[RMDB]
RNA sequence: GGGAACGACUCGAGUAGAGUCGAAAAUAAGCACCUCGAUAGGUGAGGCGGCUACACGAACAUAGGCCACUGACCCCGAACGUCGAGAGACGCCCCGGGUCAGGACAGCUCUUCCCGGCUUAAGGGUAAAAUCACAACGUCUUCGGACGUUGUGAAACCAAGAGAACACGUUCGCGUGUUCUCUUGGAAAAGAAACAACAACAACAAC
Reactivity to 2A3 in 0.01 (KOAc 150mM, MgCl2 10mM, bicine 150mM(pH8.5), 24C), signal-to-noise 1, nucleotides 027 to 156: u180a030a010g040c000a030c020c060u020c080g050a140u160a190g000g130u140g080a040g030g020c120g010g040c010u120a090c140a020c040g130a240a010c020a160u200a120g070g020c000c030a060c050u000g000a000c020c000c020c050g000a030a010c010g000u000c010g000a030g010a000g000a100c000g030c000c000c030c020g010g000g030u000c000a020g000g010a000c010a000g030c000u030c010u020u000c000c000c000g020g000c050u060u200a050a040g040g050g010u050a050a050a050a130u020c000a000c000a000a000c000g000u040c000u040u040c160g050g000a010c000g000u000u010g000u010g000a000a000a000